Chemical mapping of a 207-nucleotide RNA with DMS and 2A3. For 2A3 the reverse transcriptase was SuperScript II with manganese. DMS adducts were read by reverse transcription with MarathonRT. The reactions ran in a buffer of 150 mM KOAc, 10 mM MgCl2 and 150 mM bicine (pH 8.5), at 24 C. For 2A3, 802 sequencing reads were counted.
RNA sequence: GGGAACGACUCGAGUAGAGUCGAAAAAGAAAGAAAGAAAUUGGCCUGAAGGCAAGAUAGUGACCAAAUGACCUUCUGUGGGCCUGCCCAAGCUUGAGAUUCUACAUUACAUAUAGUCAGAGCAUUCCAGGGUUUCGUAAUUUACUGGCCUAGAACACUGAAUUAGGGUUUUCGAACCCUAAUUCAGAAAAGAAACAACAACAACAAC
Reactivity to DMS in 0.01 (KOAc 150mM, MgCl2 10mM, bicine 150mM(pH8.5), 24C), signal-to-noise 1, nucleotides 027 to 156: a130g010a110a050a130g010a110a080a170g010a040a070a160u010u000g030g030c000c000u000g020a090a070g040g000c000a040a030g000a120u010a040g020u000g010a120c090c010a060a120a160u000g000a070c030c000u010u000c090u010g010u000g020g000g010c010c000u000g000c000c040c000a110a140g020c020u000u010g000a180g010a160u000u000c010u000a060c040a110u010u010a050c050a170u000a030u000a070g000u000c120a250g010a000g010c060a090u000u010c010c010a140g000g020g040u010u000u010c060g030u020a070a120u010u000u000a000c010u000g050g020c020c020u000a090g020a050a080c090a170
Reactivity to 2A3 in 0.01 (KOAc 150mM, MgCl2 10mM, bicine 150mM(pH8.5), 24C), signal-to-noise 2, nucleotides 027 to 156: a010g060a040a010a040g060a050a070a030g050a050a140a020u160u060g020g020c050c000u040g030a030a030g010g020c040a030a010g060a070u120a020g120u070g110a010c030c020a070a050a140u080g100a170c010c000u050u050c020u020g090u140g010g020g010c020c010u010g030c010c000c000a020a030g040c000u050u090g000a050g000a080u090u040c010u040a020c020a060u160u050a060c050a060u220a060u050a140g040u080c020a010g000a000g050c010a040u080u080c030c050a010g000g000g000u010u070u090c020g020u040a000a070u000u020u180a090c040u080g020g050c050c040u090a020g070a030a020c020a000